[RMDB]
RNA sequence: GGGAACGACUCGAGUAGAGUCGAAAAUGCGUAAUUCUAAUGGUGCUUGCAUUUGGAACGCUGCUGCAUAUAUGAAACUCUCGGAUGCACUUAAACGACAGAUUCGCAUUGCAUGCCGUAAGUGUAACAAGAGUAGUCUUCGGACUACUCAAAAGAAACAACAACAACAAC
Reactivity to 2A3 in 0.01 (KOAc 150mM, MgCl2 10mM, bicine 150mM(pH8.5), 24C), signal-to-noise 9, nucleotides 027 to 129: u110g000c010g030u060a040a130u050u030c020u050a040a020u050g070g000u100g090c080u090u120g040c020a050u030u020u050g050g030a040a020c030g000c040u060g020c030u080g020c080a010u090a010u030a030u210g160a140a070a030c020u030c010u010c040g040g010a050u070g010c010a020c030u060u130a110a130a040c040g060a020c030a080g080a200u130u080c050g010c070a010u000u090g010c020a020u080g140c010c000g020u040a070a060g010u010g010u050a060a040c040a080a030
Reactivity to DMS in 0.01 (KOAc 150mM, MgCl2 10mM, bicine 150mM(pH8.5), 24C), signal-to-noise 9, nucleotides 027 to 129: u020g000c060g010u030a050a060u040u030c020u000a060a060u010g010g030u000g040c080u000u030g000c030a020u000u030u020g040g000a070a010c060g010c070u000g000c050u050g030c030a030u030a030u000a050u000g000a090a080a060c000u000c100u020c000g000g000a140u020g030c050a060c130u020u040a040a070a130c050g000a060c100a070g010a120u020u020c010g000c070a000u010u030g000c090a030u000g030c040c040g030u000a030a020g020u000g020u010a070a130c130a090a100
Structure probing data (2A3 and DMS) for a 170-nucleotide construct. The RNA was probed in 150 mM KOAc, 10 mM MgCl2 and 150 mM bicine (pH 8.5) at 24 C. It was measured as part of the RMDB library 15KLIB. For DMS the reverse transcriptase was MarathonRT.